[RMDB]
RNA sequence: GGGAACGACUCGAGUAGAGUCGAAAAUGUGCUUAACGGAAAACAAGAGGAUUUCAAAAAUGAAAAUCGUAAACGUCGAAUACUUCAAAGAUGCGCAAUGGCUGGCUAAAGAAUCAUUGUUUAUGCUUGAUCGCAAAAAUCCAAAGGUUAUUGCACAUAUAUGGGUCAUCUUCGGAUGACCCAUAUAAAAAGAAACAACAACAACAAC
Reactivity to DMS in 0.01 (KOAc 150mM, MgCl2 10mM, bicine 150mM(pH8.5), 24C), signal-to-noise 1, nucleotides 027 to 156: u000g030u010g000c010u000u000a070a250c040g000g070a150a080a060a040c030a110a160g050a180g000g020a060u000u020u000c040a050a080a060a170a040u010g000a150a070a110a060u000c010g000u010a090a120a130c020g010u000c100g010a080a030u000a030c010u020u000c030a140a140a290g020a030u000g010c070g070c040a070a110u000g030g010c080u000g030g010c070u020a070a070a060g000a120a040u000c000a070u000u000g010u000u000u000a040u080g020c120u000u000g010a100u000c060g000c150a030a060a020a020a030u000c010c030a020a040a190g010g000u000u000a010u000u010g000c010a070c030a100
Reactivity to 2A3 in 0.01 (KOAc 150mM, MgCl2 10mM, bicine 150mM(pH8.5), 24C), signal-to-noise 2, nucleotides 027 to 156: u020g000u020g000c040u010u010a000a020c020g100g030a070a100a120a070c080a050a100g020a050g040g040a010u050u100u130c100a110a080a000a070a070u140g040a050a030a010a010u010c020g000u030a250a000a000c010g050u070c000g110a030a030u070a100c040u020u210c070a080a170a100g040a100u120g000c040g010c050a020a050u020g030g000c020u010g010g000c000u090a190a010a000g090a120a060u060c020a030u030u080g030u090u050u110a040u070g010c000u050u080g070a020u070c010g000c010a000a010a110a110a000u000c010c010a060a020a080g080g010u040u010a050u040u070g000c020a010c000a010
Structure probing data (DMS and 2A3) for a 207-nucleotide construct. Conditions: 150 mM KOAc, 10 mM MgCl2 and 150 mM bicine (pH 8.5), 24 C. The 2A3 profile rests on 756 reads.